[RMDB]
RNA sequence: GGGAACGACUCGAGUAGAGUCGAAAAUGCAAUAGAUAUGGAGGUUUCAUCUGGAGACGAAUGACCGAUAUCGGAAACGAUAUCCAGUAAGACUCGUUGAAAGAUAAACCUCCUAAGUCCAAGAAAAGUUCACUAUACAGUUCGCUGUAUAGUGAACAAAAGAAACAACAACAACAAC
Reactivity to DMS in 0.01 (KOAc 150mM, MgCl2 10mM, bicine 150mM(pH8.5), 24C), signal-to-noise 4, nucleotides 027 to 126: u000g000c120a100a120u010a070g000a080u020a300u010g000g000a020g000g010u020u000u010c220a000u000c010u010g000g010a300g000a000c020g000a040a060u000g000a130c250c270g000a010u000a010u000c000g000g000a110a080a200c010g000a010u000a010u000c000c030a050g020u000a020a020g000a120c280u010c000g020u000u000g000a300a120a020g000a030u010a010a000a030c000c010u000c000c000u000a010a070g000u000c010c060a110a100g020a050a050a070a100

The record gives the reactivity of an RNA of 177 nucleotides to DMS. Source: RMDB library TTRDEL, as collected in RNAgym.